[RMDB]
RNA sequence: GGGAACGACUCGAGUAGAGUCGAAAAGGACGGGAGUCGGCUAUCCAUGCGCAGCAAACUAUUGUUGAUGACCUUCGCAAUGACCGUAUCCGGCUGCGCGGCGAAUGGGCAGCUUGUAUGUCCCAGCGAGUACCAGCAGGUGAAGCCACUAGCGCCACAAUGGCGCUAGUUUCGACUAGCGCCAUUGAAAAGAAACAACAACAACAAC
Reactivity to DMS in 0.01 (KOAc 150mM, MgCl2 10mM, bicine 150mM(pH8.5), 24C), signal-to-noise 4, nucleotides 027 to 156: g030g010a070c050g000g000g010a300g000u000c070g040g020c030u000a070u010c030c020a090u020g020c040g010c010a050g030c010a120a100a090c070u000a080u000u000g020u000u000g010a090u010g000a100c090c040u010u000c040g010c060a100a110u010g010a080c030c030g010u000a150u000c040c040g030g030c020u000g010c060g030c040g020g040c050g020a070a060u010g010g000g020c020a110g010c030u000u000g030u010a050u000g000u000c010c000c010a300g010c040g000a130g010u000a060c020c020a090g020c030a060g010g010u010g010a100a110g030c020c020a060c010u000a070g000c030g010c010c020a100
Reactivity to 2A3 in 0.01 (KOAc 150mM, MgCl2 10mM, bicine 150mM(pH8.5), 24C), signal-to-noise 4, nucleotides 027 to 156: g040g010a020c040g000g030g000a030g050u060c040g030g020c030u060a050u050c000c030a040u080g020c010g000c000a010g000c020a070a040a120c060u100a080u050u070g050u040u160g050a050u100g080a130c030c050u070u040c030g020c050a040a110u060g020a030c040c030g040u060a080u160c080c050g020g000c000u000g010c000g010c000g010g010c050g060a080a050u060g010g020g010c010a010g000c010u090u080g050u090a090u050g150u070c000c010c010a010g000c030g030a010g010u030a060c010c020a000g020c010a010g000g090u080g060a060a020g030c000c010a030c030u050a020g080c020g000c050c020a020